Notes: Conditions: 150 mM KOAc, 10 mM MgCl2 and 150 mM bicine (pH 8.5), 24 C. An RNA of 207 nucleotides, treated with 2A3 and DMS and read out base by base. The data come from the RNA Mapping Database (RMDB), library OK3TST.
RNA sequence: GGGAACGACUCGAGUAGAGUCGAAAAAAUUGCUAUCAAUACAUUUGAUAAUGGAUAUGGUAAAAUGUCUAACCGUCUUGUAGCUUUCAAACAUUUCGCUGACUCUGAAAUGGAAAUCAAACGCUCUAAUCCAUUUGGCUUUGAUACUGAAACAUUGUCUUAUAUUAGGAUUCGUCCUAAUAUAAGAAAAAGAAACAACAACAACAAC
Reactivity to 2A3 in 0.01 (KOAc 150mM, MgCl2 10mM, bicine 150mM(pH8.5), 24C), signal-to-noise 4, nucleotides 027 to 156: a000a000u150u150g010c020u030a030u100c020a030a050u110a240c050a120u120u120u140g060a050u120a140a040u050g030g000a050u040a050u180g010g020u070a080a100a030a070u100g040u020c020u020a060a070c040c020g040u050c040u040u090g040u060a030g020c000u020u100u100c060a070a120a050c000a050u030u030u030c020g010c060u050g060a080c030u040c030u130g020a010a010a020u020g000g020a010a110a060u030c000a040a060a040c110g010c030u010c010u100a020a050u020c040c020a010u040u020u100g020g020c010u040u030u030g030a030u090a100c050u060g020a000a070a010c030a070u100u180g020
Reactivity to DMS in 0.01 (KOAc 150mM, MgCl2 10mM, bicine 150mM(pH8.5), 24C), signal-to-noise 2, nucleotides 027 to 156: a090a050u000u000g010c030u000a150u000c030a070a060u000a070c040a100u000u000u010g020a140u010a050a060u010g020g000a050u000a110u000g030g020u000a050a070a060a050u010g030u000c060u020a110a100c040c030g020u020c010u020u010g030u000a080g010c030u000u000u000c070a160a070a060c010a000u000u000u000c010g020c080u000g010a100c100u000c060u000g020a040a040a020u000g030g000a070a060a080u000c050a050a050a050c160g020c040u000c090u010a090a130u000c050c010a090u000u000u010g010g010c100u000u000u000g000a110u000a120c070u010g020a130a070a050c060a080u000u010g000